[RMDB]
The data come from the RNA Mapping Database (RMDB), library TTRDES. Structure probing data (2A3 and DMS) for a 177-nucleotide construct. For 2A3, 5,988 sequencing reads were counted. The RNA was probed in 150 mM KOAc, 10 mM MgCl2 and 150 mM bicine (pH 8.5) at 24 C.

RNA sequence: GGGAACGACUCGAGUAGAGUCGAAAAGAUAUGGAUCUCCAGGACAUGUCGACACUUCGGAAACGAAGUGAUUCGACAACAGCCUGUGAGAUCCUAAGUCAAAACACGCGAUGUUCGCAUCGCGUGACUGAGGAACAAUCUUCGGAUUGUUCCUCAGAAAAGAAACAACAACAACAAC
Reactivity to 2A3 in 0.01 (KOAc 150mM, MgCl2 10mM, bicine 150mM(pH8.5), 24C), signal-to-noise 3, nucleotides 027 to 126: g000a000u000a010u050g010g000a010u000c000u020c000c010a000g020g010a030c240a300u300g000u000c000g010a000c020a000c010u000u000c000g010g010a020a030a020c000g020a000a000g000u000g000a020u050u040c000g020a000c000a000a020c050a010g030c000c000u020g020u250g020a000g000a000u030c000c000u010a000a000g000u000c020a000a090a060a150c010a000c010g000c000g010a010u010g070u160u120c300g060c160a000u000c000g000c010g000u000g000a030
Reactivity to DMS in 0.01 (KOAc 150mM, MgCl2 10mM, bicine 150mM(pH8.5), 24C), signal-to-noise 3, nucleotides 027 to 126: g000a010u000a080u000g000g000a010u000c000u000c010c010a020g010g010a010c050a300u000g040u000c000g000a020c010a000c000u010u010c000g020g000a010a000a050c010g040a000a000g000u010g000a080u010u000c000g020a000c010a110a030c240a150g000c000c000u000g000u010g010a000g010a000u000c000c000u000a000a060g000u000c000a140a100a120a240c010a000c010g020c000g000a010u000g020u010u010c260g030c010a000u010c000g030c010g050u000g020a020